[RMDB]
RNA sequence: GGGAACGACUCGAGUAGAGUCGAAAAGAUAUGGAAACGGAGCUGCGUUCCCUAUGAAGUCGGAAACGAUGGAGGGAACGAACUACAGCGAAGUUUCCUAAGUCAAAGCUCUUCUUCGGAAGAGCAACACCAUUAACGAGUUCGCUCGUUAAUGGUGAAAAGAAACAACAACAACAAC
Reactivity to 2A3 in 0.01 (KOAc 150mM, MgCl2 10mM, bicine 150mM(pH8.5), 24C), signal-to-noise 3, nucleotides 027 to 126: g010a020u060a020u120g010g030a010a000a010c020g040g030a030g010c010u050g000c010g000u020u040c000c010c000u160a300u150g020a020a000g010u000c000g000g030a040a050a070c000g000a010u020g000g030a010g000g010g000a000a000c000g010a010a010c050u140a040c010a010g000c010g030a010a000g000u000u010u020c000c000u000a040a000g010u000c030a130a050a040g000c000u000c000u020u020c000u030u100c300g170g000a000a000g000a010g000c000a000a010
Reactivity to DMS in 0.01 (KOAc 150mM, MgCl2 10mM, bicine 150mM(pH8.5), 24C), signal-to-noise 4, nucleotides 027 to 126: g000a040u000a300u000g000g000a000a010a010c020g020g020a300g030c030u000g000c000g020u010u000c000c000c000u000a130u020g010a060a270g000u010c010g030g000a110a070a080c040g000a010u000g000g000a020g030g010g000a010a010c010g000a010a000c060u000a300c010a010g010c000g000a300a300g000u000u000u000c000c000u010a020a090g010u000c040a170a160a100g010c000u000c000u000u000c000u000u030c200g030g000a010a000g000a020g020c010a030a080